[RMDB]
RNA sequence: GGGAACGACUCGAGUAGAGUCGAAAAUUGUGAUUCUUAAGAUGGAGCUCAGAAUUGCUUAUUUAACCACCUUGGCUUAUAACAUGUCCAUUAGGCUUUAAGUUUAACCUGAUGACAUGUCAUAAUCUGGGCGCUAAACUCAUGUGCAUGAGAUAUAAUAAUGCCCCUGAUUCGUCAGGGGCAUUAUAAAAGAAACAACAACAACAAC
Reactivity to 2A3 in 0.01 (KOAc 150mM, MgCl2 10mM, bicine 150mM(pH8.5), 24C), signal-to-noise 2, nucleotides 027 to 156: u040u030g000u010g010a040u000u000c000u010u070a070a070g030a120u170g110g060a070g020c020u010c050a010g030a070a050u120u040g000c000u100u020a070u120u280u070a130a040c060c030a030c010c090u060u090g050g000c010u060u000a020u000a120a010c010a000u000g010u050c110c020a010u000u000a010g020g000c030u130u160u090a200a080g090u110u060u120a060a100c000c000u000g000a010u020g000a000c000a000u000g000u010c020a010u030a070a040u010c010u020g000g000g000c010g020c010u020a090a050a000c000u000c000a020u100g090u140g190c060a020u050g050a000g010a040u100a010u110a230
Reactivity to DMS in 0.01 (KOAc 150mM, MgCl2 10mM, bicine 150mM(pH8.5), 24C), signal-to-noise 1, nucleotides 027 to 156: u000u020g040u010g000a070u000u000c000u010u000a180a190g010a190u000g050g000a090g020c010u000c000a130g020a060a090u010u000g020c060u000u000a110u000u000u010a090a120c180c030a070c070c050u000u000g010g000c040u000u000a030u000a020a010c000a010u000g010u010c080c070a010u000u000a010g010g010c020u000u000u000a120a210g040u000u000u000a020a010c000c010u020g060a020u000g010a000c010a000u010g000u000c000a020u000a000a060u000c010u000g020g000g010c050g000c020u000a050a060a120c010u000c040a050u000g030u040g020c100a100u010g000a020g000a080u000a100u000a110